Structure probing data (2A3 and DMS) for a 177-nucleotide construct. For 2A3 the reverse transcriptase was SuperScript II with manganese. The data come from the RNA Mapping Database (RMDB), library OK2TST. For DMS the reverse transcriptase was MarathonRT. The reactions ran in a buffer of 150 mM KOAc, 10 mM MgCl2 and 150 mM bicine (pH 8.5), at 24 C. Values cover nucleotides 27 to 126.
[RMDB]
RNA sequence: GGGAACGACUCGAGUAGAGUCGAAAAGGCUGAUGCUGAGAAACAGUUGGCACCCAUCACCGCACACUGGCAAACCUUGGUCAGCGAUUUCCAAAAUACCCUUGAUGCGCUGGACAGUGUCAUUGCCCACCAUUUGAUGUUUCGACAUCAAAUGGUGAAAAGAAACAACAACAACAAC
Reactivity to 2A3 in 0.01 (KOAc 150mM, MgCl2 10mM, bicine 150mM(pH8.5), 24C), signal-to-noise 5, nucleotides 027 to 126: g080g000c030u040g020a070u120g030c040u030g030a050g110a170a160a020c040a040g010u090u060g040g000c020a040c000c010c000a050u060c010a030c020c030g030c030a040c000a010c100u030g020g000c030a030a030a080c010c020u040u090g040g000u030c000a010g020c030g040a120u050u060u010c050c000a020a020a030a070u170a080c020c020c010u010u050g030a030u120g040c030g000c020u020g000g020a040c010a030g010u030g020u080c030a070u000u090g010c000c010
Reactivity to DMS in 0.01 (KOAc 150mM, MgCl2 10mM, bicine 150mM(pH8.5), 24C), signal-to-noise 6, nucleotides 027 to 126: g010g000c060u000g010a080u010g030c050u010g000a130g000a150a090a100c070a060g010u000u000g020g010c060a110c050c030c040a080u000c070a070c080c040g000c090a060c100a060c100u010g020g000c040a040a050a080c140c050u000u000g010g010u000c020a020g010c030g000a100u010u000u000c060c060a050a040a070a100u000a120c120c040c040u000u000g000a110u000g010c020g020c010u000g000g010a060c050a040g000u000g010u000c090a090u000u000g010c020c030